[RMDB]
Source: RMDB library OK1LIB, as collected in RNAgym. An RNA of 177 nucleotides, treated with 2A3 and read out base by base.
RNA sequence: GGGAACGACUCGAGUAGAGUCGAAAACAUACAACCGGAGAAAAUUUUUAUGAAGCAACGGAAGCCCUCUUCAUCUGCCGGCACAGUACCACCGAACUGCGAUAGCAGGGCCUCAACAACGUCCAUAGCACUCUCAUCAUUUCGAUGAUGAGAGUGCAAAAGAAACAACAACAACAAC
Reactivity to 2A3 in 0.01 (KOAc 150mM, MgCl2 10mM, bicine 150mM(pH8.5), 24C), signal-to-noise 2, nucleotides 027 to 126: c040a000u180a020c070a030a100c000c000g000g000a030g170a050a160a000a070u220u190u110u030u070a200u080g040a010a030g030c000a000a030c020g000g010a050a040g030c000c000c000u000c060u000u000c000a130u000c030u050g160c000c000g050g000c070a020c020a080g090u070a040c000c010a000c000c030g000a080a020c030u040g000c050g090a060u070a030g010c040a030g000g050g000c000c010u030c010a050a090c010a050a080c090g060u000c000c020a070u020a000

The RNA was probed in 150 mM KOAc, 10 mM MgCl2 and 150 mM bicine (pH 8.5) at 24 C.